[RMDB]
RNA sequence: GGGAACGACUCGAGUAGAGUCGAAAACGCUACUCGUAGAGUAGACGACGCAACGGUGGCCAUAAGGAGCGCUAUAAAUAAUUUAAUAGUAGAAUUGAUCAGAGGAACCGGAUCUUAUAAUCGGAGCGCGGUAAUGUGGGUUCGCCCACAUUACCGCAAAAGAAACAACAACAACAAC
Reactivity to 2A3 in 0.01 (KOAc 150mM, MgCl2 10mM, bicine 150mM(pH8.5), 24C), signal-to-noise 1, nucleotides 027 to 126: c000g000c030u000a000c000u010c100g240u200a060g010a010g000u040a000g120a090c000g000a000c050g030c090a260a000c100g000g030u000g000g220c000c000a000u070a040a020g160g000a130g000c010g000c000u000a000u070a000a090a170u300a000a060u250u270u140a290a000u090a010g010u020a010g070a150a200u150u080g000a000u180c070a000g000a000g000g000a090a090c000c000g030g000a060u070c000u000u100a150u090a290a060u040c000g160g000a040g120c070
The record gives the reactivity of an RNA of 177 nucleotides to 2A3. Conditions: 150 mM KOAc, 10 mM MgCl2 and 150 mM bicine (pH 8.5), 24 C. 2A3 adducts were read by reverse transcription with SuperScript II with manganese.